[RMDB]
RNA sequence: GGGAACGACUCGAGUAGAGUCGAAAAAGAUGGCAGGUUCACCCCGUACGGUGCGGAAGUUCGCGCUUCCGUGAAACGCGAAAAUCGGACGGUGGCUGCAAGUCGCAUCGCAAAACCGCGGCCAGUGUUAACCUGGACCUCUUCGGAGGUCCAGGAACGAGAUUCAUACGUUCGCGUAUGAAUCUCGAAAAGAAACAACAACAACAAC
Reactivity to 2A3 in 0.01 (KOAc 150mM, MgCl2 10mM, bicine 150mM(pH8.5), 24C), signal-to-noise 1, nucleotides 027 to 156: a000g100a030u180g000g000c010a020g030g070u180u110c030a070c030c050c000c000g000u020a020c010g020g000u100g010c020g010g020a010a010g030u070u190c120g000c020g010c120u000u000c000c020g000u020g010a180a140a020c050g000c000g080a060a000a020a060u110c030g010g000a010c040g040g010u050g040g050c010u030g000c050a020a010g030u000c040g000c100a030u050c060g000c050a070a100a040a080c100c000g000c000g050g000c020c000a040g000u010g040u050u220a040a080c000c000u000g040g000a000c000c010u010c000u020u020c090g140g000a000g030g000u000c000c000a000g000g000a000a000
The record gives the reactivity of an RNA of 207 nucleotides to 2A3. The reactions ran in a buffer of 150 mM KOAc, 10 mM MgCl2 and 150 mM bicine (pH 8.5), at 24 C. For 2A3 the reverse transcriptase was SuperScript II with manganese.